[RMDB]
RNA sequence: GGGAACGACUCGAGUAGAGUCGAAAACCUGGCGGCUUCCUCCUCCCCGGCCGUCGCAUCAGCUGUUCCCCUCUGGAGGUUUCCAACCUUCACAACUGACAGGGCCCAAGUUCGCUUGUGGCCCUCUUAGGAAGGCUAGAUUCGUCUAGCCUUCCUAAAAAGAAACAACAACAACAAC
Reactivity to 2A3 in 0.01 (KOAc 150mM, MgCl2 10mM, bicine 150mM(pH8.5), 24C), signal-to-noise 2, nucleotides 027 to 126: c000c000u010g020g030c010g010g000c030u050u010c000c010u030c000c000u030c010c000c000c000g050g000c000c010g040u060c010g000c010a080u040c030a020g090c010u080g030u050u040c000c000c000c000u020c040u020g000g010a010g000g000u040u050u010c030c070a030a040c000c000u000u020c010a050c060a110a200c060u130g050a060c030a090g000g010g010c010c000c000a010a000g000u030u060c210g020c090u020u020g040u200g020g000c000c000c000u000c000u000
Reactivity to DMS in 0.01 (KOAc 150mM, MgCl2 10mM, bicine 150mM(pH8.5), 24C), signal-to-noise 2, nucleotides 027 to 126: c000c050u000g020g010c000g010g010c000u000u000c030c070u000c050c020u000c040c020c020c020g000g000c010c010g030u020c060g020c090a050u000c010a080g000c000u020g020u020u000c000c020c020c130u050c180u020g000g020a030g030g020u000u030u040c180c170a070a080c000c020u000u000c020a030c300a040a040c070u010g050a060c250a000g000g000g000c000c030c000a020a010g020u000u100c230g070c000u000u000g000u040g030g000c020c000c020u000c010u000